[RMDB]
RNA sequence: GGGAACGACUCGAGUAGAGUCGAAAAAGGCACCCUUCUAUACCAUUUUACAUACAGAGUGGCUGAGAGGUUCUCCUCAGAGCUCUGUUUGUGAACGCAGAGCUUACUGGAGAAUCGUUGUAAGAACUGCGUUCAUAGUUCUGUGAAUGAGGUGCCACAGUAAAUACGGCUUCGGCCGUAUUUACUGAAAAGAAACAACAACAACAAC
Reactivity to 2A3 in 0.01 (KOAc 150mM, MgCl2 10mM, bicine 150mM(pH8.5), 24C), signal-to-noise 1, nucleotides 027 to 156: a020g020g000c010a010c020c010c000u080u030c080u130a220u060a120c030c010a030u070u090u070u220a020c000a000u090a040c020a000g050a010g060u090g160g060c030u040g020a000g020a040g050g060u220u140c060u060c030c000u010c020a040g010a030g020c000u000c000u020g000u000u060u100g020u000g030a000a000c010g000c000a010g020a040g000c000u010u040a000c020u060g040g120a070g140a180a130u150c010g050u020u140g010u020a010a010g010a140a070c010u010g000c000g010u000u000c000a010u000a030g020u040u000c050u010g150u060g010a010a030u100g010a030g110g000u030g000c000c010a010
Reactivity to DMS in 0.01 (KOAc 150mM, MgCl2 10mM, bicine 150mM(pH8.5), 24C), signal-to-noise 2, nucleotides 027 to 156: a090g010g000c010a040c030c000c040u000u020c030u010a300u010a090c040c060a140u000u010u020u000a110c140a180u000a110c060a040g000a030g020u000g000g040c000u000g000a110g000a070g040g020u000u000c020u000c020c000u000c030a070g000a300g000c000u000c000u010g020u000u020u000g040u000g010a060a060c110g010c000a000g010a170g020c020u000u000a020c030u000g040g020a190g030a070a070u000c050g020u000u040g000u000a000a090g010a010a060c000u010g000c060g060u000u000c050a030u020a040g000u000u000c030u030g030u000g000a050a080u000g000a120g020g030u000g010c000c010a040

Chemical mapping of a 207-nucleotide RNA with 2A3 and DMS. Values cover nucleotides 27 to 156. For DMS the reverse transcriptase was MarathonRT. Conditions: 150 mM KOAc, 10 mM MgCl2 and 150 mM bicine (pH 8.5), 24 C.